[RMDB]
RNA sequence: GGGAACGACUCGAGUAGAGUCGAAAAGGUAUGCCCCUUACAGCGCUAGGUUCAAUAACCGACAAAGAAAAUAACGAAGUGUUGGUAGAUCCAAAUUUGAUCAUUAACCAACAAGCAAGUGUUAACUUUGCUUUUGCAUAAGUAGAUACUAAAGCUAGCCAAGUACUACGUUCGCGUAGUACUUGGCAAAAGAAACAACAACAACAAC
Reactivity to 2A3 in 0.01 (KOAc 150mM, MgCl2 10mM, bicine 150mM(pH8.5), 24C), signal-to-noise 1, nucleotides 027 to 156: g100g030u100a020u060g060c000c000c000c030u130u060a030c010a100g000c010g060c150u060a000g080g000u020u020c090a030a270u180a230a000c000c030g050a000c030a000a040a000g000a000a100a000a000u010a000a000c000g070a130a060g020u060g020u030u000g010g000u010a000g040a000u050c080c070a060a080a120u300u170u120g000a000u000c020a000u020u020a030a080c000c000a000a000c000a000a000g020c000a020a020g000u000g010u150u040a020a030c000u000u020u020g000c000u020u030u140u300g000c020a020u000a040a000g010u040a020g020a050u110a260c040u060a090a050a040g000c060u080a040